Notes
Source: RMDB library OK1LIB, as collected in RNAgym. The record gives the reactivity of an RNA of 177 nucleotides to 2A3 and DMS. DMS adducts were read by reverse transcription with MarathonRT. 2A3 adducts were read by reverse transcription with SuperScript II with manganese. For 2A3, 2,224 sequencing reads were counted. Conditions: 150 mM KOAc, 10 mM MgCl2 and 150 mM bicine (pH 8.5), 24 C.
RNA sequence: GGGAACGACUCGAGUAGAGUCGAAAAGAAGAGAAGCGCGCGAAUUGGAAACCAGCGAACCUUAUUACGCGCGCAAGGAACCGGGCCUUGGUUCAUUGGAAAGAUUAGAUAAUUUCGCUGGUAAAGACGUAAUGGAUCGAUUCGUCGAUCCAUUACGAAAAGAAACAACAACAACAAC
Reactivity to 2A3 in 0.01 (KOAc 150mM, MgCl2 10mM, bicine 150mM(pH8.5), 24C), signal-to-noise 3, nucleotides 027 to 126: g120a050a020g100a000g040a080a030g000c000g010c000g000c000g000a000a060u040u040g040g010a120a040a070c000c000a000g030c000g000a020a020c000c000u090u060a110u030u110a200c000g000c000g000c000g000c000a000a030g120g010a000a020c030c020g050g200g010c040c050u080u140g000g000u000u030c020a030u060u120g030g090a170a120a020g080a130u140u180a030g070a140u140a170a090u030u060u030c000g000c000u000g010g020u020a020a050a000g040a000
Reactivity to DMS in 0.01 (KOAc 150mM, MgCl2 10mM, bicine 150mM(pH8.5), 24C), signal-to-noise 2, nucleotides 027 to 126: g000a170a150g030a220g000a150a230g000c000g010c000g000c000g000a080a070u000u020g000g000a070a100a070c000c000a000g010c010g000a000a000c100c040u000u070a020u000u010a090c050g000c000g000c000g020c000a000a040g020g010a030a020c030c000g020g000g000c040c030u020u040g000g000u000u020c000a090u010u010g020g010a140a060a060g000a030u010u040a130g010a080u020a050a030u000u010u000c010g000c010u030g000g000u030a030a070a070g000a290